This 207-nucleotide RNA was probed chemically with 2A3.
Reactivities are given for positions 27 through 156.
The 2A3 profile rests on 766 reads.
The RNA was probed in 150 mM KOAc, 10 mM MgCl2 and 150 mM bicine (pH 8.5) at 24 C.
RNA sequence: GGGAACGACUCGAGUAGAGUCGAAAAACGUAUAUGACGGGUAGGCGGCUCGUCGGGCUGAGACAAGCCCUGCCAUAGUGGACGACAACAUCAGCGUCGACGUGCUCCGCCGCAACCUCGUCGACGCAGCAGGCGCUAUAACUCGUAUCCGCCAGAAGUCUCAUACAGAGUUCGCUCUGUAUGAGACAAAAGAAACAACAACAACAAC
Reactivity to 2A3 in 0.01 (KOAc 150mM, MgCl2 10mM, bicine 150mM(pH8.5), 24C), signal-to-noise 2, nucleotides 027 to 156: a000c090g030u070a120u030a050u220g000a000c010g000g020g040u020a040g000g010c020g030g020c000u000c000g020u000c000g000g000g020c020u060g000a030g000a030c050a140a090g010c000c000c000u010g010c040c080a140u150a140g130u230g050g040a120c050g050a020c080a130a010c000a290u010c010a000g000c000g180u110c000g040a000c000g000u000g000c150u080c030c000g000c010c000g000c000a020a040c010c020u050c000g000u020c030g000a020c030g000c050a000g010c010a010g040g040c000g040c090u040a080u020a200a040c010u000c020g040u100a000u000c000c000g000c040c000a000g030a080a000